[RMDB]
RNA sequence: GGGAACGACUCGAGUAGAGUCGAAAAGAAUCACUUGAAAUUGGGAGGCGGCAGUUACAGUGAGCCGCGAUUGCGCCACUGCGCUUCAGCCUGGGCAGCAGAGUGAGACUCCUUCUCAAAAAAAAAAGUAUACAGUGGUGUUCGCACCACUGUAUACAAAAGAAACAACAACAACAAC
Reactivity to 2A3 in 0.01 (KOAc 150mM, MgCl2 10mM, bicine 150mM(pH8.5), 24C), signal-to-noise 1, nucleotides 027 to 126: g010a010a020u020c010a020c020u070u070g090a050a160a190u220u080g020g180g000a010g030g020c050g060g000c040a050g030u110u190a080c000a000g000u060g050a070g120c140c060g040c040g040a120u090u300g000c000g000c040c020a040c010u030g010c010g010c040u070u050c020a020g000c000c000u060g020g190g000c030a010g000c030a010g030a040g100u020g010a040g000a030c020u000c030c070u050u050c090u000c030a110a050a010a010a000a030a020a020a020a010
Reactivity to DMS in 0.01 (KOAc 150mM, MgCl2 10mM, bicine 150mM(pH8.5), 24C), signal-to-noise 2, nucleotides 027 to 126: g020a090a230u000c050a040c030u010u000g020a040a120a070u000u000g010g000g010a070g000g050c010g030g040c100a050g000u010u000a100c030a030g000u000g000a090g020c050c060g020c080g010a080u010u020g020c010g020c020c030a070c020u020g020c300g000c020u000u000c040a100g010c020c000u010g000g000g010c040a050g000c070a130g000a040g010u000g000a050g010a140c020u000c010c030u000u000c010u000c000a010a020a000a000a000a050a030a080a130a260

Chemical mapping of a 177-nucleotide RNA with 2A3 and DMS.
For 2A3, 1,144 sequencing reads were counted.
For DMS, 1,211 sequencing reads were counted.
As a SHAPE reagent, 2A3 marks flexible, mostly unpaired nucleotides at the ribose 2'-OH.